[RMDB]
Description:
Structure probing data (2A3) for a 207-nucleotide construct.
RNA sequence: GGGAACGACUCGAGUAGAGUCGAAAACUCUCUCCCCGCGCUUUUUCCUUCUUUCGGACCGGCUCAUCUUCGACUAGAGGCGACGGUCCUCAGUACUCUUACUCUUUUCUGUAAAGAGGAGACUGCUGGACCUGUCGCCCGAGUUCGAGAUGAGCCACCUGUGCAUAUCCUUCGGGAUAUGCACAGGAAAAGAAACAACAACAACAAC
Reactivity to 2A3 in 0.01 (KOAc 150mM, MgCl2 10mM, bicine 150mM(pH8.5), 24C), signal-to-noise 2, nucleotides 027 to 156: c030u090c010u030c070u030c000c060c000c020g030c030g050c120u170u110u100u210u150c020c030u070u190c020u110u150u120c070g130g050a100c070c130g000g000c000u000c000a010u000c010u300u220c010g030a030c000u050a030g030a300g200g000c000g000a000c020g000g010u000c000c000u010c000a000g000u090a300c000u030c000u070u090a160c010u040c000u050u120u050u120c110u200g300u300a000a000a030g000a000g000g010a000g000a000c000u010g060c080u000g000g000a000c000c010u090g000u050c000g020c030c000c000g010a000g010u070u130c000g010a010g000a000u010g000a000g030c000c000a000